Chemical mapping of a 177-nucleotide RNA with 2A3 and DMS. In probing experiments dimethyl sulfate is read out at A N1 and C N3, which are open when not base-paired. The RNA was probed in 150 mM KOAc, 10 mM MgCl2 and 150 mM bicine (pH 8.5) at 24 C.
[RMDB]
RNA sequence: GGGAACGACUCGAGUAGAGUCGAAAAGUCAUAGUGGGGAAAAUAGGAUUAUUCCUUUAGCUCGAUAAGCAACCAGAAGUUCUUCCUUCAAAUCUUGACAUUUAAUCAAUCAGAAAUUGAUUUUUGGAAUCUUGUCGAUAUUCGUAUCGACAAGAUUAAAAGAAACAACAACAACAAC
Reactivity to 2A3 in 0.01 (KOAc 150mM, MgCl2 10mM, bicine 150mM(pH8.5), 24C), signal-to-noise 2, nucleotides 027 to 126: g040u000c000a020u130a130g070u100g010g050g000g040a050a070a000a060u080a050g000g000a020u070u090a140u190u270c000c000u010u040u050a010g000c010u020c050g050a070u040a250a040g000c030a030a100c000c020a050g020a100a000g010u070u010c010u040u060c030c010u040u060c050a060a060a160u020c030u010u070g010a010c000a030u110u050u120a050a020u020c010a000a000u030c040a070g160a160a190a010u050u040g000a040u050u040u080u070u060g110g050
Reactivity to DMS in 0.01 (KOAc 150mM, MgCl2 10mM, bicine 150mM(pH8.5), 24C), signal-to-noise 2, nucleotides 027 to 126: g000u000c040a050u010a080g020u010g000g000g010g010a060a060a140a060u010a050g010g030a100u010u010a210u010u000c020c000u010u010u000a110g000c030u000c050g010a100u010a060a120g020c030a050a100c100c080a080g010a050a070g010u000u000c100u010u000c040c010u010u010c090a020a070a110u000c030u000u010g010a070c010a050u000u000u000a030a030u000c010a030a000u000c020a140g000a020a190a110u000u000g010a030u000u000u010u000u010g000g000